Structure probing data (2A3 and DMS) for a 177-nucleotide construct. The 2A3 profile rests on 1,861 reads. For 2A3 the reverse transcriptase was SuperScript II with manganese. For DMS the reverse transcriptase was MarathonRT. DMS (dimethyl sulfate) methylates the pairing face of unpaired adenines and cytosines.
RNA sequence: GGGAACGACUCGAGUAGAGUCGAAAAUCGCGUGCGGUUCGCGAGCGGGUGAUCAGGGAGGUGCCGGCGGGCGGAAUGAUGGUUAACCAUUUGGCUUUUCAGGUGUCGACGGCCAAACUGCCGUUCGUACGGUACUCCCAUUCGUGGGAGUACCGUAAAAAGAAACAACAACAACAAC
Reactivity to 2A3 in 0.01 (KOAc 150mM, MgCl2 10mM, bicine 150mM(pH8.5), 24C), signal-to-noise 3, nucleotides 027 to 126: u050c010g010c000g020u090g000c040g010g070u060u120c010g000c040g010a010g040c050g000g030g010u100g060a120u060c030a090g020g020g010a070g040g010u030g020c020c000g010g010c070g010g020g000c040g000g060a060a030u090g030a020u140g000g020u090u140a050a140c030c030a020u050u020u080g030g000c000u010u060u060u120c080a030g070g010u050g060u110c020g020a010c050g020g000c050c000a100a090a050c040u090g020c000c010g000u030u030c020g030
Reactivity to DMS in 0.01 (KOAc 150mM, MgCl2 10mM, bicine 150mM(pH8.5), 24C), signal-to-noise 2, nucleotides 027 to 126: u020c010g020c070g000u010g000c010g000g000u030u010c050g020c020g000a060g020c020g000g010g000u000g000a090u040c070a060g000g000g040a130g000g010u000g000c030c010g000g000c040g000g000g000c060g020g000a080a030u010g020a070u010g000g000u000u020a110a130c040c040a090u000u000u000g000g010c100u000u000u040u000c060a040g000g020u010g000u010c040g000a040c120g000g000c000c060a020a100a120c140u010g010c000c000g000u000u010c070g000